Structure probing data (2A3 and DMS) for a 177-nucleotide construct.
The DMS profile rests on 30,058 reads.
For DMS the reverse transcriptase was MarathonRT.
RNA sequence: GGGAACGACUCGAGUAGAGUCGAAAAGGGAAGGCCUGCAGCCCUGCAGCCAGCGAGAUCACAGGUCUGAGCACAGCUGUGCUGGCAGCGCAUGGGCGUCAAUGUUUUGAUGACAACCUGGCCAACCGUUUAUUUUACAUUUCGAUGUAAAAUAAACAAAAGAAACAACAACAACAAC
Reactivity to 2A3 in 0.01 (KOAc 150mM, MgCl2 10mM, bicine 150mM(pH8.5), 24C), signal-to-noise 6, nucleotides 027 to 126: g060g000g020a080a020g010g010c010c010u030g030c080a030g010c010c010c000u000g000c000a010g000c010c000a010g000c030g040a110g020a140u180c040a020c020a070g040g160u040c040u070g070a080g100c200a030c010a250g010c000u020g020u090g060c000u000g030g000c020a030g060c020g000c070a100u230g000g000g030c010g010u030c020a030a040u120g070u130u240u110u160g100a080u100g010a010c010a030a050c020c050u020g000g000c000c000a000a010c000c000
Reactivity to DMS in 0.01 (KOAc 150mM, MgCl2 10mM, bicine 150mM(pH8.5), 24C), signal-to-noise 9, nucleotides 027 to 126: g010g010g010a100a300g000g010c010c010u000g010c230a170g010c010c010c000u000g010c010a080g000c000c000a010g010c090g010a120g000a140u010c190a070c030a030g000g010u010c010u000g000a300g030c180a080c030a050g000c010u000g000u000g010c010u000g000g000c000a070g010c150g010c040a040u020g010g000g010c020g000u000c060a030a070u010g010u000u000u000u010g010a110u000g000a060c130a070a120c180c050u000g010g010c000c010a040a250c040c040
It was measured as part of the RMDB library OK2TST. Conditions: 150 mM KOAc, 10 mM MgCl2 and 150 mM bicine (pH 8.5), 24 C.